Structure probing data (DMS and 2A3) for a 177-nucleotide construct. 2A3 adducts were read by reverse transcription with SuperScript II with manganese. It was measured as part of the RMDB libraries RFM100 and RFMREP. The reactions ran in a buffer of 150 mM KOAc, 10 mM MgCl2 and 150 mM bicine (pH 8.5), at 24 C.

RNA sequence: GGGAACGACUCGAGUAGAGUCGAAAAGAACAUGGAAAAAGUGAAUCUUAUCUGGGGGGUGGAGCGACCGGAAGAAGACAUACGUUUUUGUGCCUAGUUCAUGAUGCAUUGUUGAAGGAAGGGCCGGGAUUACUACAAAUUUCGAUUUGUAGUAAUCAAAAGAAACAACAACAACAAC
Reactivity to DMS in 0.01 (KOAc 150mM, MgCl2 10mM, bicine 150mM(pH8.5), 24C), signal-to-noise 9, nucleotides 027 to 126: g000a080a140c060a060u000g000g000a060a060a080a110a110g010u000g010a110a100u010c030u010u010a100u010c060u010g000g010g010g010g000g030u010g010g010a070g010c070g010a090c060c040g000g010a060a070g010a070a080g000a030c070a070u020a070c150g010u000u000u010u010u000g010u010g000c030c040u000a090g010u010u010c040a050u010g000a060u010g010c070a100u010u000g010u000u000g010a080a110g000g010a070a080g010g000g020c070c030g000g000
Reactivity to 2A3 in 0.01 (KOAc 150mM, MgCl2 10mM, bicine 150mM(pH8.5), 24C), signal-to-noise 9, nucleotides 027 to 126: g050a040a020c050a060u110g040g070a070a070a020a030a030g070u070g080a110a090u040c020u060u080a050u050c050u080g020g000g000g000g000g020u080g030g020a030g020c020g010a030c010c000g020g000a030a020g050a030a010g030a030c020a070u170a060c080g030u030u020u030u060u100g060u060g020c000c020u040a060g030u030u050c030a030u090g050a040u070g040c060a050u020u110g030u040u070g050a070a030g020g010a030a060g020g000g000c000c000g030g010